[RMDB]
RNA sequence: GGGAACGACUCGAGUAGAGUCGAAAAGAUAUGGAAAGACCGAGACAUGCUUGGACUCGGAAACGAGUCCAAAGCAACAGCUCGUGUCUUUCCUAAGUCAAAACGAUCUGGGUUCGCCCAGAUCGAACAUCUAUUAUAUGUUCGCAUAUAAUAGAUGAAAAGAAACAACAACAACAAC
Reactivity to DMS in 0.01 (KOAc 150mM, MgCl2 10mM, bicine 150mM(pH8.5), 24C), signal-to-noise 8, nucleotides 027 to 126: g010a030u000a210u010g010g000a010a020a010g000a020c000c000g000a020g010a080c110a170u010g020c000u000u000g000g000a010c000u000c000g010g000a020a040a090c000g000a020g010u000c000c000a000a020a030g020c000a060a090c250a170g000c000u000c000g010u010g010u000c000u000u000u000c000c000u000a010a070g010u010c020a100a080a120a220c030g010a010u000c000u000g010g000g010u000u010c300g010c000c000c000a010g000a000u000c000g000a070a140
Reactivity to 2A3 in 0.01 (KOAc 150mM, MgCl2 10mM, bicine 150mM(pH8.5), 24C), signal-to-noise 5, nucleotides 027 to 126: g000a010u020a010u070g000g010a020a000a010g010a000c010c020g020a010g030a050c230a210u260g000c000u010u010g000g000a000c000u000c010g000g000a030a010a000c000g000a000g010u040c010c020a020a010a000g000c000a020a050c090a110g020c000u000c000g060u130g000u020c000u000u000u000c000c000u000a010a000g010u000c020a010a010a080a170c020g000a000u000c000u000g030g020g030u070u100c300g120c050c000c000a000g010a000u000c000g000a000a010
Structure probing data (DMS and 2A3) for a 177-nucleotide construct. It was measured as part of the RMDB library TTRDES. The 2A3 profile rests on 29,777 reads. For 2A3 the reverse transcriptase was SuperScript II with manganese. Conditions: 150 mM KOAc, 10 mM MgCl2 and 150 mM bicine (pH 8.5), 24 C. DMS adducts were read by reverse transcription with MarathonRT. The DMS profile rests on 20,180 reads.